[RMDB]
RNA sequence: GGGAACGACUCGAGUAGAGUCGAAAAACCACCUUCCUUUGCGAUGGUCUCGGUGCGCGAGAGGUUUAUGACAGUGCUGGCCACAAUUACUCGCUUUCCCGCGAGAAAUUCUUUGUCCUUGGUGGCGAUGCGUAUCAUCGUUCGCGAUGAUACGCAUAAAAGAAACAACAACAACAAC
Reactivity to 2A3 in 0.01 (KOAc 150mM, MgCl2 10mM, bicine 150mM(pH8.5), 24C), signal-to-noise 2, nucleotides 027 to 126: a000c020c000a050c010c010u030u050c040c010u070u080u200g020c070g070a090u100g000g040u020c030u000c060g060g030u080g020c060g000c020g030a040g030a060g130g060u090u100u070a140u100g050a030c040a040g040u010g080c010u060g070g040c000c000a020c010a020a000u070u040a070c000u000c000g000c000u030u050u010c020c000c040g000c010g000a020g050a000a040a000u110u040c050u050u060u080g040u030c010c040u050u130g090g020u050g000g020c000g000
Reactivity to DMS in 0.01 (KOAc 150mM, MgCl2 10mM, bicine 150mM(pH8.5), 24C), signal-to-noise 2, nucleotides 027 to 126: a110c020c020a120c060c040u000u000c010c010u010u000u000g000c070g000a070u000g000g000u010c020u000c050g020g000u000g010c100g020c030g000a090g000a090g000g010u000u010u010a060u020g020a100c080a070g000u000g020c060u000g000g020c010c040a060c090a080a060u000u010a130c010u000c010g000c010u000u000u000c020c020c000g000c010g000a000g010a070a070a060u000u000c070u000u010u000g000u000c040c040u000u000g020g020u000g010g030c060g020
Chemical mapping of a 177-nucleotide RNA with 2A3 and DMS. The 2A3 profile rests on 2,140 reads. The RNA was probed in 150 mM KOAc, 10 mM MgCl2 and 150 mM bicine (pH 8.5) at 24 C. The DMS profile rests on 2,855 reads.